Annotation: Source: RMDB library M2PK50, as collected in RNAgym. This 177-nucleotide RNA was probed chemically with 2A3 and DMS. DMS adducts were read by reverse transcription with MarathonRT. The reactions ran in a buffer of 150 mM KOAc, 10 mM MgCl2 and 150 mM bicine (pH 8.5), at 24 C. For 2A3 the reverse transcriptase was SuperScript II with manganese.
RNA sequence: GGGAACGACUCGAGUAGAGUCGAAAAGACCUUCAGUUCGCUGAAGGUCGAUGAUGGUAAGAGAGAUUACCAUCUGUUAAGUGAUAUGGAUAAGAUCUGUCAGUGAACGUGCUUUCGAGCACGUUAACUCCCCCAAACAAUUCGUUGUUUGGGGGAGAAAAGAAACAACAACAACAAC
Reactivity to 2A3 in 0.01 (KOAc 150mM, MgCl2 10mM, bicine 150mM(pH8.5), 24C), signal-to-noise 4, nucleotides 027 to 126: g000a000c010c000u000u000c000a030g010u030u130c160g000c100u020g000a000a010g020g000u000c000g000a000u030g000a000u000g010g020u020a040a000g090a040g040a010g020a130u000u040a000c000c000a000u000c020u040g120u080u190a180a130g080u050g110a040u030a060u230g130g050a040u040a120a090g060a150u030c020u060g070u040c050a060g060u000g200a020a000c010g000u000g000c000u060u050u080c160g040a010g000c020a000c000g000u010u000a010a010
Reactivity to DMS in 0.01 (KOAc 150mM, MgCl2 10mM, bicine 150mM(pH8.5), 24C), signal-to-noise 6, nucleotides 027 to 126: g000a020c000c000u000u000c010a000g000u000u010c240g030c000u000g000a010a010g010g020u000c000g010a030u000g010a010u000g000g010u000a010a020g010a180g020a160g010a170u000u000a010c000c000a010u000c000u010g010u010u000a070a110g000u000g010a050u000a050u000g010g000a070u010a040a090g010a300u000c020u000g010u000c010a090g020u020g000a030a020c000g000u000g010c010u000u000u000c160g010a020g020c010a010c010g020u000u000a040a110